[RMDB]
RNA sequence: GGGAACGACUCGAGUAGAGUCGAAAAAGCCAGCACUAUCGCGCGGGCGGUGUCGCGGGCGGCGGCGUCGUCGGCCGAGUCGCCCGGCAACGUGGUGGCGACCAAGGCGAGGUAUCGGGCGGUGAUCCUCACCUCGCACCUUCGGGUGCGAGGUGAGAAAAGAAACAACAACAACAAC
Reactivity to 2A3 in 0.01 (KOAc 150mM, MgCl2 10mM, bicine 150mM(pH8.5), 24C), signal-to-noise 1, nucleotides 027 to 126: a000g060c020c000a060g050c000a020c000u140a100u300c080g040c000g000c040g100g020g010c000g020g000u100g100u030c050g020c000g040g040g000c000g010g020c000g000g110c120g210u300c000g000u000c040g070g120c000c000g000a020g000u000c000g000c040c070c060g000g030c060a060a020c030g000u170g000g110u070g000g000c000g030a000c000c010a030a070g020g020c030g060a050g030g000u090a040u150c000g030g000g000c000g000g020u140g050a000u000c000